[RMDB]
RNA sequence: GGGAACGACUCGAGUAGAGUCGAAAAAUCGCCUGCAAUAUCCAACGCCUUUUCAGCAAUUUCGCGCGCGCCGAGCUCGGUAUUUUCCAACAGAGCGCGAGCGGCAGCCUGGGCAUAAGGACCGCCGGGAUCGGACUCAUUUCGAUGAGUCCGAUCCAAAAGAAACAACAACAACAAC
Reactivity to 2A3 in 0.01 (KOAc 150mM, MgCl2 10mM, bicine 150mM(pH8.5), 24C), signal-to-noise 2, nucleotides 027 to 126: a010u130c120g050c030c000u040g000c040a000a040u030a070u090c000c050a060a020c110g010c020c000u100u150u120u130c050a020g000c040a120a150u010u080u180c050g000c000g000c000g010c000g000c030c010g030a020g020c070u070c080g030g000u050a200u160u190u050u070c060c010a070a050c000a070g020a020g010c020g000c000g020a000g000c000g000g010c010a000g020c000c000u040g000g000g040c020a010u080a060a030g070g010a000c030c020g050c020c000g050
Structure probing data (2A3) for a 177-nucleotide construct.
Values cover nucleotides 27 to 126.
Conditions: 150 mM KOAc, 10 mM MgCl2 and 150 mM bicine (pH 8.5), 24 C.
For 2A3, 1,006 sequencing reads were counted.
2A3 adducts were read by reverse transcription with SuperScript II with manganese.